Description:
The record gives the reactivity of an RNA of 207 nucleotides to 2A3. It was measured as part of the RMDB library RNAMAK.
RNA sequence: GGGAACGACUCGAGUAGAGUCGAAAACAGGUGUUCGCACCUGAAAAAGGGGUCUCCGUUGAAACCCUAGUGAGCGAAGAACAUACUGAAGCCUCCACGGUAUGGGAGCUUUAGGGUGGAGGAGACGGAGGCACCCAAAAAGGCCGUUCGCGGCCAAGUUACAUCGAUAGUUCGCUAUCGAUGUAACAAAAGAAACAACAACAACAAC
Reactivity to 2A3 in 0.01 (KOAc 150mM, MgCl2 10mM, bicine 150mM(pH8.5), 24C), signal-to-noise 3, nucleotides 027 to 156: c010a020g010g010u040g040u100u140c210g080c070a010c010c000u030g050a120a070a000a010a010g110g010g050g020u020c010u000c010c010g050u100u000g010a020a000a010c000c000c020u040a070g200u070g240a000g010c020g090a300a010g010a010a000c000a010u000a010c000u030g060a200a020g020c000c010u010c000c000a010c010g010g000u000a000u010g010g020g010a010g010c010u000u050u040a000g010g030g000u030g010g000a010g000g000a000g010a010c020g000g000a010g000g000c000a050c000c010c000a010a110a050a020a070g030g000c040c000g020u070u080c270g010c020g140g000c000c000a000a000
The reactions ran in a buffer of 150 mM KOAc, 10 mM MgCl2 and 150 mM bicine (pH 8.5), at 24 C.